[RMDB]
RNA sequence: GGGAACGACUCGAGUAGAGUCGAAAAUACUCUUACCCACUUCCCCCAAGCACAGUUGGGGUGGGGGACAGCUGAAGAGGUGGAAACAUGUGCCUGAGAAUCCUAAUGAAAUCGGGGUAAAGGAGCCACAAUGCUCCGUAUUCGUACGGAGCAUUGUAAAAGAAACAACAACAACAAC
Reactivity to DMS in 0.01 (KOAc 150mM, MgCl2 10mM, bicine 150mM(pH8.5), 24C), signal-to-noise 4, nucleotides 027 to 126: u020a100c050u010c060u000u000a150c020c010c020a300c110u000u010c100c000c010c020c030a010a090g020c100a060c180a120g020u010u000g010g000g000g020u000g010g000g010g000g010a060c160a060g010c070u000g000a060a060g000a060g000g040u000g000g010a130a050a090c070a040u000g020u010g020c010c030u010g010a110g010a100a080u010c020c020u010a070a090u010g000a050a080a110u000c120g000g020g000g000u010a030a070a080g000g000a090g010c060c090
Reactivity to 2A3 in 0.01 (KOAc 150mM, MgCl2 10mM, bicine 150mM(pH8.5), 24C), signal-to-noise 2, nucleotides 027 to 126: u060a050c020u030c000u080u080a140c000c030c020a070c030u050u040c000c010c010c040c000a000a010g000c030a030c000a130g060u110u080g090g010g010g000u030g000g000g000g000g010a010c050a030g000c030u050g030a070a020g020a020g030g040u030g020g110a120a100a010c030a090u140g020u070g070c000c010u040g020a060g070a070a030u050c010c030u070a130a040u130g060a130a050a000u120c070g020g010g000g030u050a070a010a010g010g020a030g050c020c030